[RMDB]
RNA sequence: GGGAACGACUCGAGUAGAGUCGAAAAGAUAGGAGGUGUGGGCUUGGUUAGUAGAGGUAGAAUUAUGAUUGUUCUUGUGAGUUUCAGUAAGAGGUGGGAGUGAUUGGAAUUUGGCUCCAUCAGAUCAACUACACACACUGUUCGCAGUGUGUGUAGUAAAAGAAACAACAACAACAAC
Reactivity to 2A3 in 0.01 (KOAc 150mM, MgCl2 10mM, bicine 150mM(pH8.5), 24C), signal-to-noise 3, nucleotides 027 to 126: g060a030u200a060g020g000a050g020g010u080g030u060g090g010g000c010u070u060g070g000u020u050a040g070u020a010g020a050g010g050u040a030g040a090a050u170u070a060u300g170a140u020u030g020u090u000c020u000u050g030u000g020a150g050u020u050u080c000a000g000u030a110a010g030a010g030g040u050g010g030g000a040g000u030g050a070u030u110g070g080a110a130u070u050u050g010g000c000u000c010c000a040u030c030a040g000a060u070c030a030
Reactivity to DMS in 0.01 (KOAc 150mM, MgCl2 10mM, bicine 150mM(pH8.5), 24C), signal-to-noise 3, nucleotides 027 to 126: g000a100u000a080g020g010a080g000g030u010g000u000g010g000g010c040u010u000g020g000u000u010a070g010u010a040g020a050g010g020u020a050g020a060a070u000u030a090u030g000a140u020u000g000u000u000c170u020u020g000u000g010a130g020u000u000u000c020a060g000u040a080a060g000a090g010g020u010g020g000g000a110g030u000g000a080u020u010g020g010a050a050u010u010u010g010g040c070u010c020c030a030u000c030a070g000a120u000c120a060